About this RNA:
Source: RMDB library M2PK50, as collected in RNAgym. The record gives the reactivity of an RNA of 177 nucleotides to DMS and 2A3. 2A3 adducts were read by reverse transcription with SuperScript II with manganese. The reactions ran in a buffer of 150 mM KOAc, 10 mM MgCl2 and 150 mM bicine (pH 8.5), at 24 C.
RNA sequence: GGGAACGACUCGAGUAGAGUCGAAAAGGCGACAAGUUCGCUUGUCGCCACGGGGUCCAGCCUGGAAAGGCUGCAGGUAUUGGAAUGGUCGGGCCGCCAUUCAACGCGGGACAUUCGUGUCCCGCAACGAGCCAGAAAAAUUCGUUUUUCUGGCUCGAAAAGAAACAACAACAACAAC
Reactivity to DMS in 0.01 (KOAc 150mM, MgCl2 10mM, bicine 150mM(pH8.5), 24C), signal-to-noise 2, nucleotides 027 to 126: g010g010c000g000a010c000a020a030g020u000u000c270g020c010u000u010g000u000c000g050c000c000a000c220g010g000g050g030u000c180c020a010g000c010c000u010g040g040a120a180a040g020g000c010u000g060c080a060g010g010u000a110u000u010g010g000a030a010u000g000g010u000c050g020g010g000c040c030g010c030c000a040u000u000c030a180a070c210g020c000g000g000g000a020c000a020u010u040c170g000u000g000u000c000c010c010g050c020a000a020
Reactivity to 2A3 in 0.01 (KOAc 150mM, MgCl2 10mM, bicine 150mM(pH8.5), 24C), signal-to-noise 2, nucleotides 027 to 126: g020g000c010g010a000c000a030a000g010u020u040c170g060c090u020u000g010u010c000g020c000c000a000c030g070g010g020g000u020c010c010a000g000c010c000u050g090g130a170a140a040g000g010c000u000g010c050a020g140g020u110a190u170u300g110g010a000a010u020g020g020u030c070g030g000g000c020c020g010c000c010a000u010u010c040a050a040c100g000c010g000g020g000a010c010a010u030u030c170g030u020g000u020c000c000c000g000c000a000a010